[RMDB]
RNA sequence: GGGAACGACUCGAGUAGAGUCGAAAAGACCGCAGAAGCGGAAACGGCGAAAACGUACGGAAGAAUACGCACGAGCGGAAGACUGGAUAGCGACCGAGAGGUCGCCACGCCGAAUCAUCCAGAAGAAGCUAGCGGAUACUUUCGAGUAUCCGCUAGCAAAAGAAACAACAACAACAAC
Reactivity to 2A3 in 0.01 (KOAc 150mM, MgCl2 10mM, bicine 150mM(pH8.5), 24C), signal-to-noise 2, nucleotides 027 to 126: g040a010c010c010g000c010a030g100a300a010g020c010g010g050a060a140a000c000g000g010c000g030a110a150a080a000c040g030u200a060c010g030g050a010a060g050a020a070u110a080c010g000c000a060c030g040a000g030c020g000g000a040a010g060a010c000u000g000g000a010u010a020g000c000g000a000c000c000g020a020g000a000g130g010u000c030g030c000c000a010c020g070c050c000g000a000a000u110c000a010u020c030c000a010g000a040a000g080a070a020
Reactivity to DMS in 0.01 (KOAc 150mM, MgCl2 10mM, bicine 150mM(pH8.5), 24C), signal-to-noise 1, nucleotides 027 to 126: g000a110c000c000g000c000a140g100a170a190g040c020g000g000a000a000a080c020g000g000c050g050a120a050a030a080c120g080u000a060c000g000g040a040a240g080a080a100u010a060c130g010c020a080c000g000a210g000c010g000g000a090a080g000a190c040u000g000g040a030u000a050g010c020g020a000c040c000g000a140g000a040g000g020u000c020g010c030c040a000c300g000c000c080g000a020a030u050c270a040u000c050c070a020g000a090a090g060a040a090
An RNA of 177 nucleotides, treated with 2A3 and DMS and read out base by base. For 2A3, 1,080 sequencing reads were counted. Values cover nucleotides 27 to 126. For DMS the reverse transcriptase was MarathonRT. It was measured as part of the RMDB library OK1LIB.